[RMDB]
RNA sequence: GGGAACGACUCGAGUAGAGUCGAAAACAGUAGUCAUCCUUACUGCUAGUUCAACUUAUUGUUGAGCAACAUUGCCAAAUUGCGGGAAAGUCUUAAUGACUUCGCUACCAAGUUCAAUAGCGUACUCUGAAUGGCCGGCUUAAUACACCGGGUAGGGCCACAACACUGAGUUCGCUCAGUGUUGUGGAAAAGAAACAACAACAACAAC
Reactivity to 2A3 in 0.01 (KOAc 150mM, MgCl2 10mM, bicine 150mM(pH8.5), 24C), signal-to-noise 3, nucleotides 027 to 156: c020a010g060u120a000g000u020c050a080u080c080c030u030u030a030c020u030g030c040u040a020g020u000u000c000a000a020c030u140u270a100u220u300g000u020u000g000a000g000c000a010a060c020a100u040u150g050c030c000a070a070a050u060u090g030c030g020g000g010a210a000a000g000u000c020u080u290a230a140u160g000a000c000u010u020c020g010c010u020a060c010c010a080a110g090u140u180c060a100a100u070a080g000c000g040u030a040c020u010c010u090g080a110a050u040g060g000c000c010g000g010c000u020u000a000a030u070a090c020a000c040c000g000g000g010u020a000g020g010g010